[RMDB]
RNA sequence: GGGAACGACUCGAGUAGAGUCGAAAAUUUUCUACAACGCCAUAAACAAUACUCGAUUCGACGAAACGACAAAGAGGCAAGUGCCCGAUCCGUACUUUUUCAACAAGUACGAUUUGAGCAUCACGUCGGGCAGAAAACGCACUUUCGACGAACGCAAUACCCUGAGUAAAUUCGUUUACUCAGGGUAAAAAGAAACAACAACAACAAC
Reactivity to 2A3 in 0.01 (KOAc 150mM, MgCl2 10mM, bicine 150mM(pH8.5), 24C), signal-to-noise 3, nucleotides 027 to 156: u060u000u010u070c060u090a160c100a170a040c070g070c060c000a070u160a100a140a020c090a200a090u190a130c070u070c030g230a300u000u010c000g000a000c050g040a090a020a030c060g110a030c120a030a120a020g080a020g060g000c010a050a000g060u010g040c000c000c000g000a000u010c060c000g000u000a050c000u080u000u050u060u170c040a060a060c060a120a000g000u000a000c000g000a000u140u010u110g030a010g020c020a060u060c040a040c030g020u000c000g000g020g000c000a010g010a000a100a020a000c030g050c000a020c030u060u050u070c060g020a040c010g010a050a000c040g020c020a000a060
Reactivity to DMS in 0.01 (KOAc 150mM, MgCl2 10mM, bicine 150mM(pH8.5), 24C), signal-to-noise 1, nucleotides 027 to 156: u000u000u000u000c110u000a120c100a090a300c060g010c000c010a120u020a100a080a150c080a090a100u000a090c030u020c020g030a170u000u030c000g010a090c010g030a070a110a100c010g030a120c030a080a060a100g000a120g030g000c020a100a150g000u000g000c000c000c000g040a020u000c080c020g030u000a000c030u000u020u000u000u020c210a120a130c220a020a010g020u000a000c020g020a100u000u010u040g030a090g000c040a120u000c110a030c100g020u000c000g000g020g060c020a080g000a050a060a030a070c100g040c090a090c010u000u000u000c000g030a090c040g000a000a080c040g000c130a090a160
This 207-nucleotide RNA was probed chemically with 2A3 and DMS. Source: RMDB library OK3TST, as collected in RNAgym. Conditions: 150 mM KOAc, 10 mM MgCl2 and 150 mM bicine (pH 8.5), 24 C. For 2A3, 1,354 sequencing reads were counted. In probing experiments dimethyl sulfate is read out at A N1 and C N3, which are open when not base-paired.